[RMDB]
RNA sequence: GGGAACGACUCGAGUAGAGUCGAAAAAGAGAGCGCGAAAAAGAUCGAUCGAUGGUUUGAACGCGCAAGUUUAAGUUUGAUACGGGCAUACUAGCUAGCUAGCUAGCAAAACAAACUUAAUAAAGAAGAACUACAGGGUAUUCGUACCCUGUAGUUCAAAAGAAACAACAACAACAAC
Reactivity to 2A3 in 0.01 (KOAc 150mM, MgCl2 10mM, bicine 150mM(pH8.5), 24C), signal-to-noise 1, nucleotides 027 to 126: a030g130a000g020a050g010c000g000c010g050a120a010a000a070a080g020a000u010c030g030a030u120c070g090a100u280g020g010u030u010u040g020a140a020c000g000c000g000c010a000a020g000u000u000u010a000a000g000u000u030u020g050a070u080a090c080g120g030g000c080a010u040a120c040u000a010g000c000u020a040g130c020u010a020g010c010u000a000g000c020a010a110a030a000c000a000a000a010c000u010u020a010a020u090a080a110a020g080a080a000
Reactivity to DMS in 0.01 (KOAc 150mM, MgCl2 10mM, bicine 150mM(pH8.5), 24C), signal-to-noise 2, nucleotides 027 to 126: a070g010a150g010a180g000c000g000c000g010a050a070a030a200a040g010a020u000c020g000a170u000c080g020a120u010g010g000u000u010u000g020a110a200c000g000c030g000c010a050a030g010u000u000u000a000a000g000u000u000u000g010a100u030a110c170g010g010g010c200a120u010a090c010u000a010g020c000u010a170g030c160u010a080g010c000u010a020g020c030a030a090a100a110c000a010a000a010c000u000u000a000a010u000a040a100a100g010a100a060